[RMDB]
RNA sequence: GGGAACGACUCGAGUAGAGUCGAAAAUCAGUCCACAGAUUAUCUCGAUGAUCAUAUCGACGAUAUUCACCUUCUUGCUAGCGGAUCUUUCGAGAUCCGUUUUUUCAGGUCAUGGAGCUUUUUGUGCCUCUGACGGUAUAUUCGUAUACCGUCAGAGAAAAGAAACAACAACAACAAC
Reactivity to 2A3 in 0.01 (KOAc 150mM, MgCl2 10mM, bicine 150mM(pH8.5), 24C), signal-to-noise 5, nucleotides 027 to 126: u090c020a010g100u020c000c010a060c030a070g030a030u030u020a010u020c010u000c020g030a020u060g060a170u160c060a130u170a030u200c020g010a030c130g000a010u000a030u060u050c030a050c010c010u080u080c020u040u090g060c040u050a020g020c000g000g000a000u000c000u030u080u150c200g050a020g000a010u000c000c000g000u020u010u000u000u020u030c050a020g000g020u030c030a030u090g040g040a040g030c030u080u110u020u080u140g120u120g050c010
Reactivity to DMS in 0.01 (KOAc 150mM, MgCl2 10mM, bicine 150mM(pH8.5), 24C), signal-to-noise 4, nucleotides 027 to 126: u020c070a120g020u020c030c010a070c220a110g010a050u000u000a030u000c000u010c010g000a020u000g030a120u040c220a130u010a080u020c020g000a020c220g000a010u010a010u000u000c040a140c100c040u010u010c030u010u010g010c170u000a050g000c000g000g000a010u000c000u000u010u050c150g010a020g000a010u000c000c000g010u000u000u010u000u010u000c040a010g010g000u010c120a100u000g000g000a050g020c100u000u020u020u010u010g010u010g020c140